[RMDB]
RNA sequence: GGGAACGACUCGAGUAGAGUCGAAAAAGUUAUGGAAGCAAGUUUAAUUAGUAGUAUGCGUACUGCAGCAGUUUCAGUGAUUGCAGCUAAGCAUUUGGCUAAAAAAGGAUUUAAAGACUUAACAAUCCGCUACACUUAGGUUCGCCUAAGUGUAGCGAAAAGAAACAACAACAACAAC
Reactivity to DMS in 0.01 (KOAc 150mM, MgCl2 10mM, bicine 150mM(pH8.5), 24C), signal-to-noise 2, nucleotides 027 to 126: a090g010u020u000a050u020g000g000a050a040g000c300a050a040g010u000u000u060a100a290u000u010a010g010u000a060g010u010a000u000g000c000g000u000a170c030u000g050c000a020g000c060a020g000u000u050u000c130a230g000u040g010a080u020u000g030c000a020g010c070u020a000a150g020c010a020u000u060u010g000g000c020u010a000a000a020a070a020a140g000g000a030u000u000u000a080a160a060g030a120c030u020u060a020a020c040a050a060u040c060
Reactivity to 2A3 in 0.01 (KOAc 150mM, MgCl2 10mM, bicine 150mM(pH8.5), 24C), signal-to-noise 3, nucleotides 027 to 126: a000g030u060u040a030u080g000g030a040a000g020c150a120a000g030u020u020u220a250a170u060u000a030g060u020a010g000u000a000u020g030c030g000u030a010c010u000g000c000a020g000c000a020g050u150u160u130c130a120g030u060g080a300u070u000g020c000a000g040c170u110a070a000g000c050a000u000u050u160g140g000c000u020a000a000a000a000a060a200g040g020a000u040u030u110a120a070a000g100a030c010u040u030a010a010c000a000a150u060c050

Chemical mapping of a 177-nucleotide RNA with DMS and 2A3. For 2A3 the reverse transcriptase was SuperScript II with manganese. Values cover nucleotides 27 to 126. 2A3 is a SHAPE reagent: it acylates the 2'-hydroxyl of flexible nucleotides of all four kinds. The 2A3 profile rests on 1,692 reads. The reactions ran in a buffer of 150 mM KOAc, 10 mM MgCl2 and 150 mM bicine (pH 8.5), at 24 C. Reactivities are rounded to 0.1 and cut off at 0 and 3.